[RMDB]
RNA sequence: GGGAACGACUCGAGUAGAGUCGAAAAAGUCACCUAUUACGAUAGGUGACAUUUGAACCAGCGAACAAUUCAGUUGCGACAUUCGAGGUUUCAGUCUGAAUCAUAGUAGCCAUUACGAUGGCUACAACUCACUCCCGACUGUUCGCAGUCGGGAGAAGAUAGAGCAUCAGUUCGCUGAUGCUCUAUCAAAAGAAACAACAACAACAAC
Reactivity to DMS in 0.01 (KOAc 150mM, MgCl2 10mM, bicine 150mM(pH8.5), 24C), signal-to-noise 2, nucleotides 027 to 156: a110g030u000c000a010c010c000u000a000u030u030a110c200g020a130u000a010g000g030u010g020a000c000a000u000u010u000g020a060a250c000c040a170g020c120g000a050a070c090a160a100u000u000c030a090g010u000u000g000c040g010a110c030a100u000u000c110g010a120g000g030u000u020u000c040a100g000u000c080u030g010a050a030u000c080a060u000a140g000u000a020g000c000c000a020u000u000a140c270g030a170u000g020g000c000u000a000c000a030a080c080u000c020a080c000u000c000c000c000g000a040c020u000g000u000u000c300g030c000a010g020u010c000g000g000g020a000g030a000a020
Reactivity to 2A3 in 0.01 (KOAc 150mM, MgCl2 10mM, bicine 150mM(pH8.5), 24C), signal-to-noise 6, nucleotides 027 to 156: a010g000u000c000a000c000c000u000a010u030u060a090c260g040a020u010a010g000g010u010g000a010c000a010u020u030u050g030a030a020c010c010a020g040c020g050a040a040c020a070a040u030u010c010a010g010u020u020g060c040g030a000c020a090u130u230c160g130a140g160g090u010u050u020c020a040g090u030c010u010g020a010a010u060c060a030u090a210g000u000a000g000c000c000a000u030u070a060c280g100a030u000g010g000c000u000a000c000a010a010c010u070c060a040c000u000c000c010c000g000a000c000u020g040u040u090c210g000c070a000g000u000c000g000g020g000a000g000a000a000
Chemical mapping of a 207-nucleotide RNA with DMS and 2A3. For DMS, 2,765 sequencing reads were counted. Reactivities are rounded to 0.1 and cut off at 0 and 3. It was measured as part of the RMDB library M2RFPK.